[RMDB]
RNA sequence: GGGAACGACUCGAGUAGAGUCGAAAAUCGGCUUACAGAUAUUAUAGCCAGACGCAAUCGAGCGCAUCUUCACUAAGGUGUGUCGUGUCUGAACAUAGCAGUGCCCAACUUCCUCGAUCUCCUGCGAGGCGCUAUCGAUGUUCGCAUCGAUAGCGCCAAAAGAAACAACAACAACAAC
Reactivity to 2A3 in 0.01 (KOAc 150mM, MgCl2 10mM, bicine 150mM(pH8.5), 24C), signal-to-noise 2, nucleotides 027 to 126: u130c010g000g000c010u010u150a050c050a040g200a270u130a210u100u180a100u110a130g000c000c000a000g060a020c030g000c100a090a080u160c060g020a050g020c010g000c000a000u000c030u130u190c080a160c120u150a130a000g000g020u000g000u000g000u010c100g030u030g040u020c030u050g000a010a000c100a060u150a010g010c040a030g060u010g090c010c020c000a020a010c010u040u000c000c000u000c000g020a010u000c010u010c010c020u030g090c030g010a070